[RMDB]
RNA sequence: GGGAACGACUCGAGUAGAGUCGAAAAUACACCAAAACACUCGAUUACAGAGUAAAGAUUUUGGUUGCAAUUGGCGUUUUGUGAUCACAUUCUCCAUCUUCUUCUUCUUCUUUGAGAUAAACAAAGAGAUUUGUUUACUCUCUAUCUCAGGAUUUCACGCAUUUAAUGAGUUCGCUCAUUAAAUGCGAAAAGAAACAACAACAACAAC
Reactivity to 2A3 in 0.01 (KOAc 150mM, MgCl2 10mM, bicine 150mM(pH8.5), 24C), signal-to-noise 2, nucleotides 027 to 156: u080a000c000a010c010c000a010a030a010a000c010a000c000u050c010g090a140u220u300a120c120a110g060a010g040u160a120a180a030g050a050u040u010u010u050g030g000u000u050g000c010a020a040u020u020g040g000c040g040u010u060u140u120g060u080g100a050u090c020a010c020a040u090u000c020u020c040c000a030u000c010u050u010c000u030u000c000u040u040c000u040u000c000u010u080u110g020a010g000a020u030a000a000a000c000a000a000a050g060a030g010a070u010u010u000g000u000u030u000a080c060u000c000u000c040u030a100u030c030u000c040a060g180g000a180u040u060u040c040a020
Chemical mapping of a 207-nucleotide RNA with 2A3. It was measured as part of the RMDB library OK3TST. Reactivities are given for positions 27 through 156. The reactions ran in a buffer of 150 mM KOAc, 10 mM MgCl2 and 150 mM bicine (pH 8.5), at 24 C.